[RMDB]
This 177-nucleotide RNA was probed chemically with DMS and 2A3. The reactions ran in a buffer of 150 mM KOAc, 10 mM MgCl2 and 150 mM bicine (pH 8.5), at 24 C. Values cover nucleotides 27 to 126. For 2A3 the reverse transcriptase was SuperScript II with manganese. DMS adducts were read by reverse transcription with MarathonRT. The 2A3 profile rests on 4,215 reads.
RNA sequence: GGGAACGACUCGAGUAGAGUCGAAAACAAACGAGCACUCCGAGGAUUGCAGAUCUUGAUUUGUGAAUGGGAUGACUCGGACCUCGUUCGCUGCGUCGAGAAAUCUCGACAUGAUCUCUCGUAGCUGACCAAGGACUACGUUCGCGUAGUCCUUGGUAAAAGAAACAACAACAACAAC
Reactivity to DMS in 0.01 (KOAc 150mM, MgCl2 10mM, bicine 150mM(pH8.5), 24C), signal-to-noise 3, nucleotides 027 to 126: c090a030a030a020c010g000a000g000c040a080c300u000c000c000g010a010g000g010a140u010u000g020c020a010g010a060u000c080u000u040g060a060u010u020u010g010u010g010a080a080u020g000g010g010a020u000g000a300c000u000c000g000g000a020c120c000u000c000g000u000u000c100g000c060u010g010c070g020u000c050g000a000g000a110a040a070u010c050u000c170g000a090c180a070u030g000a060u000c030u000c040u000c000g030u000a120g020c030u020g020
Reactivity to 2A3 in 0.01 (KOAc 150mM, MgCl2 10mM, bicine 150mM(pH8.5), 24C), signal-to-noise 6, nucleotides 027 to 126: c000a000a030a000c000g010a000g000c030a020c030u000c000c000g000a000g050g020a100u050u170g070c010a070g060a220u020c030u160u300g120a250u220u180u220g190u090g110a120a080u090g020g050g100a010u040g130a110c000u000c000g010g010a020c010c010u010c010g010u070u030c010g000c000u010g000c000g030u060c060g030a010g000a020a160a050u090c040u040c070g140a110c050a120u130g020a030u010c000u000c000u000c000g030u020a020g000c030u020g050